Record summary:
Structure probing data (2A3 and DMS) for a 177-nucleotide construct.
[RMDB]
RNA sequence: GGGAACGACUCGAGUAGAGUCGAAAAGAUAUGGACACGUGUAUGGAGCUCUGGGUCGGAAACGACCCUGAGCCUUGAAGUACCGUGUCCUAAGUCAAAAGAACUAGCUUGUUCGCAAGCUAGUUCACGUCCCAAAAUGGUUCGCCAUUUUGGGACGAAAAGAAACAACAACAACAAC
Reactivity to 2A3 in 0.01 (KOAc 150mM, MgCl2 10mM, bicine 150mM(pH8.5), 24C), signal-to-noise 1, nucleotides 027 to 126: g000a010u010a010u060g000g000a000c000a000c000g130u160g020u170a010u060g190g300a250g060c020u020c020u010g010g000g000u040c020g000g000a020a010a010c000g000a010c000c030c000u010g000a000g040c010c000u090u300g170a080a020g000u010a010c010c010g010u030g000u010c000c000u000a010a000g000u000c000a000a000a000a270g010a010a000c050u010a000g030c000u060u000g060u100u140c260g100c180a040a000g000c010u010a000g000u000u020c000a000
Reactivity to DMS in 0.01 (KOAc 150mM, MgCl2 10mM, bicine 150mM(pH8.5), 24C), signal-to-noise 1, nucleotides 027 to 126: g020a000u000a070u010g000g000a000c000a020c000g020u010g010u000a000u010g010g000a160g060c000u010c000u010g000g000g040u000c020g010g010a020a010a030c010g000a010c000c000c090u000g010a000g030c040c240u020u000g000a150a210g000u000a000c000c000g000u000g000u020c010c000u020a000a050g000u000c000a050a060a140a180g020a010a010c010u000a010g010c000u000u000g000u000u000c230g030c000a000a010g000c010u000a000g000u000u000c010a140

Overview:
DMS (dimethyl sulfate) methylates the pairing face of unpaired adenines and cytosines. It was measured as part of the RMDB library TTRDES. The reactions ran in a buffer of 150 mM KOAc, 10 mM MgCl2 and 150 mM bicine (pH 8.5), at 24 C.